[RMDB]
RNA sequence: GGGAACGACUCGAGUAGAGUCGAAAACUGGUCGAUAACAUCAGCAGGAUUGCGUAUAGCAUUACUCUUCCUUCUCAUGUCUAUCAGCACUGUGCAUCUCAGCUCCGCCACUGUCUUGGGGAGUUAGUCCACCAAGGCAUUUCGAUGCCUUGGUGGAAAAAGAAACAACAACAACAAC
Reactivity to 2A3 in 0.01 (KOAc 150mM, MgCl2 10mM, bicine 150mM(pH8.5), 24C), signal-to-noise 2, nucleotides 027 to 126: c020u040g040g040u060c060g010a030u010a050a010c020a020u000c010a000g000c010a010g030g040a080u070u130g030c050g060u080a030u070a120g150c110a120u030u100a070c060u010c000u030u020c000c000u060u060c010u000c050a050u070g000u080c130u120a050u020c020a000g080c040a020c040u070g020u050g070c040a070u030c070u000c040a000g000c010u030c020c020g300c090c000a050c060u140g080u180c070u180u070g020g000g000g010a010g000u050u030a030g030
Reactivity to DMS in 0.01 (KOAc 150mM, MgCl2 10mM, bicine 150mM(pH8.5), 24C), signal-to-noise 2, nucleotides 027 to 126: c050u000g000g010u000c040g000a120u000a060a030c060a040u010c110a040g020c070a060g020g000a050u000u000g000c090g010u000a060u000a170g010c170a060u000u000a030c040u010c020u000u000c030c000u000u000c020u000c130a000u000g010u020c110u000a010u000c030a090g040c050a060c030u000g010u000g040c070a070u000c020u000c020a100g000c030u000c030c030g010c060c030a070c200u000g000u010c140u000u000g010g030g000g000a050g030u000u010a050g020